[RMDB]
RNA sequence: GGGAACGACUCGAGUAGAGUCGAAAAAAGACCACCACUGGCGGCGCCGCCGACGGUGCGGAUGUGACGUUCACCAGUGUGUCCGGCGCGAGCAUCGAGGCAAUCAUCAUCUACAAGGACACCGGUACAUCCAACAACAGUUCGCUGUUGUUGGAUGAAAAGAAACAACAACAACAAC
Reactivity to 2A3 in 0.01 (KOAc 150mM, MgCl2 10mM, bicine 150mM(pH8.5), 24C), signal-to-noise 2, nucleotides 027 to 126: a000a000g080a000c000c000a000c000c000a000c040u030g000g040c020g010g010c030g070c050c050g020c020c010g080a070c020g020g040u050g040c000g000g040a140u120g100u120g100a070c060g040u080u130c090a020c050c040a070g040u060g010u030g030u260c020c000g040g030c020g010c020g050a020g060c030a020u080c060g020a020g000g100c060a120a050u070c020a020u020c020a010u020c020u050a050c060a090a050g090g010a030c000a010c080c000g030g000u010a040
Reactivity to DMS in 0.01 (KOAc 150mM, MgCl2 10mM, bicine 150mM(pH8.5), 24C), signal-to-noise 2, nucleotides 027 to 126: a130a090g020a150c030c020a110c100c030a040c030u010g020g010c020g000g000c030g010c070c110g010c010c030g010a050c060g000g030u000g030c070g010g010a090u010g010u040g030a110c060g020u000u000c060a050c000c030a100g000u020g020u000g020u000c060c020g000g000c060g000c050g000a060g010c050a070u010c110g020a090g020g000c080a080a060u000c090a070u010c090a060u010c050u000a080c090a100a110g000g000a030c030a040c030c030g020g040u020a220